[RMDB]
The record gives the reactivity of an RNA of 207 nucleotides to 2A3 and DMS. It was measured as part of the RMDB library RNAMAK. DMS adducts were read by reverse transcription with MarathonRT. The 2A3 profile rests on 2,954 reads. DMS (dimethyl sulfate) methylates the pairing face of unpaired adenines and cytosines.
RNA sequence: GGGAACGACUCGAGUAGAGUCGAAAAACCUUUGUGUAUGGAGGACCGUGGAGGUAACUUCGCCCAUUGGGCGAAGUAUUACCGCGAAACACGGUCUACCCACCCAUACACUCUGGUAAAAUCUUGCCUUAGAAGCUUCGGCUUCUAAGGCAAGAAACCAAUACCAUUUCUUCGGAAAUGGUAUUGGAAAAGAAACAACAACAACAAC
Reactivity to 2A3 in 0.01 (KOAc 150mM, MgCl2 10mM, bicine 150mM(pH8.5), 24C), signal-to-noise 3, nucleotides 027 to 156: a000c000c010u000u020u000g000u000g000u000a000u000g010g010a020g020g010a010c010c000g020u010g000g110a200g030g000u000a000a020c010u000u000c010g020c000c000c090a300u300u300g020g000g010c010g000a000a000g010u010a010u020u020a000c000c000g030c110g190a060a040a010c020a000c010g000g020u000c000u000a010c010c010c020a070c000c000c000a000u000a000c000a000c000u000c000u010g020g000u050a040a080a050a110u020c000u000u000g000c000c010u000u010a000g000a000a000g000c010u110u200c280g100g000c000u000u000c070u000a010a000g000g000c000a000a000g000a000a000a000
Reactivity to DMS in 0.01 (KOAc 150mM, MgCl2 10mM, bicine 150mM(pH8.5), 24C), signal-to-noise 1, nucleotides 027 to 156: a030c040c000u000u020u000g030u000g010u000a010u000g020g000a080g000g000a020c010c000g030u000g020g000a180g030g000u000a040a060c010u010u010c000g010c000c010c010a300u000u010g060g050g000c000g000a010a000g030u010a020u000u000a030c010c000g030c060g020a130a170a220c040a000c050g000g010u010c030u000a000c020c000c040a300c120c010c010a010u010a010c000a000c000u010c020u000g030g000u000a090a040a140a120u000c010u000u000g020c000c010u000u000a020g000a060a010g040c010u000u000c300g070g020c000u030u010c000u000a010a010g000g020c000a000a000g000a010a070a090
Conditions: 150 mM KOAc, 10 mM MgCl2 and 150 mM bicine (pH 8.5), 24 C.